[RMDB]
RNA sequence: GGGAACGACUCGAGUAGAGUCGAAAAACCAAGUUCGCUUGGUCACUUGCGUACUACUCUCUGAGGUAAGCGAGGUAACGAAUCCCAAAUAGGAUUCGGGACUACCCACCGCUUACUCCCCACCAGAGAGUAUCGCCACCUCAACGUUCGCGUUGAAAGAAUGCUUUCAAUUCGUUGAAAGCAUUCUAAAAGAAACAACAACAACAAC
Reactivity to 2A3 in 0.01 (KOAc 150mM, MgCl2 10mM, bicine 150mM(pH8.5), 24C), signal-to-noise 2, nucleotides 027 to 156: a010c010c000a020a010g030u090u120c240g040c200u010u010g000g010u060c020a070c120u090u070g010c020g030u090a120c060u010a000c000u030c000u020c000u000g000a000g000g040u000a000a000g000c010g000a030g000g010u020a090a010c010g010a000a000u040c020c070c090a170a250a040u250a100g000g010a000u000u030c050g020g050g050a070c080u020a020c000c010c030a120c030c050g000c000u000u020a000c000u010c020c000c000c010a050c020c020a000g000a010g010a010g020u000a000u070c000g020c010c000a050c010c010u040c010a000a010c020g040u120u090c300g020c020g140u040u030g010a030a020
Reactivity to DMS in 0.01 (KOAc 150mM, MgCl2 10mM, bicine 150mM(pH8.5), 24C), signal-to-noise 2, nucleotides 027 to 156: a060c000c010a020a120g010u010u000c220g080c020u050u010g010g000u000c020a050c060u000u000g000c000g030u000a150c080u010a020c010u020c030u000c000u000g000a300g050g000u000a020a030g020c020g000a070g010g030u000a050a130c000g000a010a010u000c000c000c020a080a120a160u000a050g000g000a060u000u000c030g010g030g030a140c050u000a040c010c010c020a300c090c010g000c020u010u010a050c040u000c230c100c060c020a300c250c020a030g000a030g000a090g030u000a000u000c000g010c030c050a050c050c020u000c000a010a020c010g030u000u000c110g010c170g010u010u000g030a060a060